[RMDB]
RNA sequence: GGGAACGACUCGAGUAGAGUCGAAAACGCUGGGACCGGGAGGACGACGAAGGGAGCUGAAGCGCGCACGGCGACGAUCUUCCAAGUCCGUUGAUCGGUCCUGUGCUGAAGCGCGCACGGCAACCGAAAGGUGCGGAGUGGAGCAUUCGUGCUCCAAACUAGAGGUUGCAUUCGUGCAACCUCUAGUAAAAGAAACAACAACAACAAC
Reactivity to DMS in 0.01 (KOAc 150mM, MgCl2 10mM, bicine 150mM(pH8.5), 24C), signal-to-noise 1, nucleotides 027 to 156: c050g030c020u020g020g020g040a090c010c010g000g030g020a050g050g000a110c010g000a300c300g000a040a030g010g040g000a050g000c010u000g030a020a120g000c000g040c000g050c000a300c050g060g060c000g010a050c130g020a040u000c020u000u000c030c040a120a300g000u000c020c020g040u010u000g000a060u060c000g000g010u000c020c010u000g050u000g010c000u030g000a080a020g000c000g030c050g050c010a020c050g010g000c050a120a240c000c020g000a050a110a180g000g020u010g020c070g030g000a160g020u000g020g000a050g000c020a080u000u000c190g010u000g010c010u000c000c010a000a090
Reactivity to 2A3 in 0.01 (KOAc 150mM, MgCl2 10mM, bicine 150mM(pH8.5), 24C), signal-to-noise 2, nucleotides 027 to 156: c060g000c020u020g000g000g000a000c000c000g000g000g010a030g020g000a000c020g000a000c120g000a010a000g020g040g010a010g000c010u030g030a110a020g010c010g000c010g000c010a010c030g000g000c000g030a210c010g000a110u000c000u000u010c010c030a030a070g000u030c010c000g000u070u040g000a000u010c000g000g010u000c010c000u010g010u040g000c010u080g070a120a030g020c010g000c010g000c000a020c010g040g010c030a100a080c010c000g070a100a060a000g000g000u020g000c040g070g040a100g070u110g020g000a010g010c020a040u060u120c160g130u080g000c000u000c030c010a010a040